[RMDB]
RNA sequence: GGGAACGACUCGAGUAGAGUCGAAAAGUGCACGACUUCGGUCGUGCACAAAUAAAGGCAGACGAGUGCGUACGGCACAGUCAUACGCUGACGCCACGACAAAAAGUAACGUCUUCGGACGUUACAACGUACUCCCAGAGUUCGCUCUGGGAGUACGAAAAGAAACAACAACAACAAC
Reactivity to 2A3 in 0.01 (KOAc 150mM, MgCl2 10mM, bicine 150mM(pH8.5), 24C), signal-to-noise 2, nucleotides 027 to 126: g000u010g020c010a000c010g010a020c010u040u100c300g030g000u010c010g000u000g020c000a000c000a000a000a000u000a000a010a000g010g000c050a020g000a070c030g150a130g180u030g010c020g020u110a170c150g120g020c010a000c020a030g020u020c010a020u040a160c170g000c030u010g020a030c040g050c040c010a030c090g120a060c110a020a150a010a000a020g000u010a010a000c000g010u000c000u030u100c240g070g000a000c010g010u000u000a000c000a000a000
Reactivity to DMS in 0.01 (KOAc 150mM, MgCl2 10mM, bicine 150mM(pH8.5), 24C), signal-to-noise 2, nucleotides 027 to 126: g000u000g020c000a000c010g000a000c000u000u020c090g020g000u000c010g000u000g000c000a000c010a000a040a030u000a040a100a260g010g010c040a060g000a060c070g000a120g010u010g000c000g010u000a120c210g000g050c010a070c000a080g030u000c050a080u000a040c130g000c000u000g010a140c160g020c020c000a010c090g000a050c190a050a020a030a100a050g000u030a010a010c000g030u000c000u000u040c170g000g000a020c000g000u000u000a000c000a050a050

The record gives the reactivity of an RNA of 177 nucleotides to 2A3 and DMS. Values cover nucleotides 27 to 126. It was measured as part of the RMDB library M2PK50. The RNA was probed in 150 mM KOAc, 10 mM MgCl2 and 150 mM bicine (pH 8.5) at 24 C. The DMS profile rests on 1,479 reads.